[RMDB]
RNA sequence: GGGAACGACUCGAGUAGAGUCGAAAAGACGCUAAGCUCUAUGGACCGAGUCGUCCGCAAGGCAACAGGCGACCUGUACGUGCGCGUAUAGAGGACCAACGACAGUGCACGAAGAACUUAGCGUUGAAGUCAGAGAGCUGUUCGCAGCUUUCUGACUAAAAGAAACAACAACAACAAC
Reactivity to 2A3 in 0.01 (KOAc 150mM, MgCl2 10mM, bicine 150mM(pH8.5), 24C), signal-to-noise 9, nucleotides 027 to 126: g040a000c000g000c000u000a000a010g000c010u000c010u030a130u150g070g050a040c020c030g040a060g030u030c010g010u020c000c000g030c060a080a090g120g010c040a110a030c030a120g030g010c020g040a060c010c000u020g020u060a020c010g010u010g020c090g000c010g050u030a050u080a180g090a060g050g100a100c060c050a080a030c070g070a020c030a030g020u030g040c020a010c040g040a030a010g000a010a010c010u010u000a000g000c000g000u000u020g010a020
Reactivity to DMS in 0.01 (KOAc 150mM, MgCl2 10mM, bicine 150mM(pH8.5), 24C), signal-to-noise 9, nucleotides 027 to 126: g000a010c010g000c000u010a010a030g000c040u000c000u000a120u020g000g000a090c040c050g010a150g010u000c030g000u010c010c020g020c170a110a060g010g010c190a100a090c150a120g000g000c020g000a280c060c000u000g010u010a060c020g020u010g040c100g020c020g020u000a040u010a050g010a090g000g000a200c060c040a090a070c090g000a080c110a120g010u010g000c070a040c040g000a110a030g010a030a040c000u000u000a010g000c000g010u010u000g000a100
Structure probing data (2A3 and DMS) for a 177-nucleotide construct. For DMS, 34,983 sequencing reads were counted. For 2A3 the reverse transcriptase was SuperScript II with manganese. The RNA was probed in 150 mM KOAc, 10 mM MgCl2 and 150 mM bicine (pH 8.5) at 24 C.